RNA sequence: GGGAACGACUCGAGUAGAGUCGAAAACCGUAGGUAGCGAUAAGCUACGUAACAGCAACAGCGGAGCUUCGAAAGAGGCUCCGACAUGCUGGAGAAGUAGCUUUUGACGCUACCUAAACGGAAAAACACACUGAUGACUUCGGUCAUCAGUGUGUAACCUAUAUAACGACUUCGGUCGUUAUAUAGGAAAAGAAACAACAACAACAAC
Reactivity to DMS in 0.01 (KOAc 150mM, MgCl2 10mM, bicine 150mM(pH8.5), 24C), signal-to-noise 2, nucleotides 027 to 156: c010c000g020u000a030g000g010u000a000g030c020g030a140u010a070a080g030c000u000a000c010g000u000a150a300c010a010g040c010a040a090c100a150g020c010g020g000a040g000c010u000u000c010g010a180a220a300g020a040g010g000c000u000c000c000g010a000c020a280u000g010c000u010g000g000a100g010a130a300g020u000a010g000c000u000u000u010u020g020a250c070g020c000u000a000c000c000u000a000a040a080c010g050g010a020a070a090a120a070c000a020c000a000c000u000g020a020u000g000a040c000u000u000c280g050g000u000c000a000u010c000a000g000u000g020u000g000u000a020a070
Reactivity to 2A3 in 0.01 (KOAc 150mM, MgCl2 10mM, bicine 150mM(pH8.5), 24C), signal-to-noise 4, nucleotides 027 to 156: c000c000g000u020a010g000g000u010a000g000c000g010a070u010a060a000g000c000u000a000c000g000u010a020a030c000a000g020c000a010a080c010a170g070c000g010g000a010g000c000u000u010c000g080a100a090a050g010a000g000g000c000u000c000c000g000a010c020a000u030g000c000u010g010g000a020g000a020a000g000u000a000g000c000u040u020u010u160g140a060c010g000c000u000a010c000c000u000a000a000a000c000g030g040a100a070a020a020a000c000a000c010a010c000u000g000a000u000g000a010c010u040u060c300g090g000u000c010a000u000c000a000g010u000g000u000g000u000a000a000
Annotation:
Structure probing data (DMS and 2A3) for a 207-nucleotide construct. Conditions: 150 mM KOAc, 10 mM MgCl2 and 150 mM bicine (pH 8.5), 24 C. DMS adducts were read by reverse transcription with MarathonRT. For 2A3 the reverse transcriptase was SuperScript II with manganese. For DMS, 3,267 sequencing reads were counted. The data come from the RNA Mapping Database (RMDB), library RNAMAK.